An RNA of 207 nucleotides, treated with DMS and 2A3 and read out base by base. For 2A3, 2,042 sequencing reads were counted. 2A3 adducts were read by reverse transcription with SuperScript II with manganese. DMS adducts were read by reverse transcription with MarathonRT.
RNA sequence: GGGAACGACUCGAGUAGAGUCGAAAAGAGAGGGUAACCACCGGCGCGCGUCACUGAUAUAUCCACCGGGGGGUAAGGGGAGAAAAGGAUACAGCGCGACGAAGUUGGCACGCUGCCCCGUAAGGCUUGAAGAGUGUAGUGUUCGCACUACACUCAAGGUAUAUUAAUAGUUCGCUAUUAAUAUACCAAAAGAAACAACAACAACAAC
Reactivity to DMS in 0.01 (KOAc 150mM, MgCl2 10mM, bicine 150mM(pH8.5), 24C), signal-to-noise 2, nucleotides 027 to 156: g000a100g010a110g000g000g000u000a090a090c020c060a100c060c010g000g000c040g010c060g030c020g000u000c050a250c070u000g000a100u010a110u000a130u000c030c020a110c040c020g000g020g020g000g040g030u050a040a060g010g040g050g000a080g000a080a050a110a080g020g000a150u000a050c040a030g000c000g010c010g020a060c050g010a060a170g010u010u020g020g010c050a090c020g030c040u000g010c020c000c010c020g010u020a130a100g020g020c020u000u000g000a140a180g000a020g000u000g050u000a000g040u000g020u000u000c300g030c010a010c010u000a000c000a010c010u020c010a010a050
Reactivity to 2A3 in 0.01 (KOAc 150mM, MgCl2 10mM, bicine 150mM(pH8.5), 24C), signal-to-noise 2, nucleotides 027 to 156: g110a000g020a040g030g010g000u050a120a100c020c020a040c000c010g010g030c010g000c010g000c010g060u060c020a020c080u020g050a020u040a010u030a010u280c020c010a080c080c080g040g000g000g040g000g030u070a070a020g040g040g000g000a030g050a020a070a010a020g020g000a020u020a100c040a040g000c010g010c010g030a010c030g010a080a010g100u180u050g000g020c040a000c060g000c030u050g010c000c000c000c020g000u020a050a050g020g010c060u080u050g080a150a060g000a050g010u000g000u000a000g000u000g000u000u010c080g030c060a000c000u000a000c000a000c000u000c000a000a000